[RMDB]
RNA sequence: GGGAACGACUCGAGUAGAGUCGAAAACUCGCCGACGCGCUCGCCGUGCAGGCGCGCGCGCAUCCGGGCGAAUCGGGCUUCGUCGUGCUGCCGCGCGGCGACGAGGCGCUGCAAAUGCGGAUCGCGAAAAAUUAUAGGGUUUCGACCCUAUAAUUUUAAAAGAAACAACAACAACAAC
Reactivity to DMS in 0.01 (KOAc 150mM, MgCl2 10mM, bicine 150mM(pH8.5), 24C), signal-to-noise 5, nucleotides 027 to 126: c080u000c020g020c010c010g010a090c070g020c000g000c020u000c000g030c010c010g010u010g020c250a140g010g010c000g020c110g000c000g010c010g000c070a030u010c050c050g020g000g010c020g010a030a070u010c110g010g000g010c040u000u000c010g010u010c000g020u000g020c040u000g000c080c090g010c090g020c030g010g020c010g000a010c010g000a040g000g000c010g010c020u010g000c220a060a060a060u000g010c020g020g000a080u000c110g010c080g010a060
Reactivity to 2A3 in 0.01 (KOAc 150mM, MgCl2 10mM, bicine 150mM(pH8.5), 24C), signal-to-noise 2, nucleotides 027 to 126: c010u000c010g000c010c010g090a180c110g000c000g020c010u020c010g040c020c000g080u190g120c180a060g030g000c040g000c020g000c020g030c000g000c020a020u000c020c040g120g040g000c030g040a010a070u160c050g060g040g000c030u020u010c010g020u010c010g030u050g040c060u120g090c030c040g050c020g000c010g090g000c000g010a000c010g000a010g000g060c170g030c100u040g020c050a050a060a040u100g080c000g000g050a050u070c090g000c030g100a070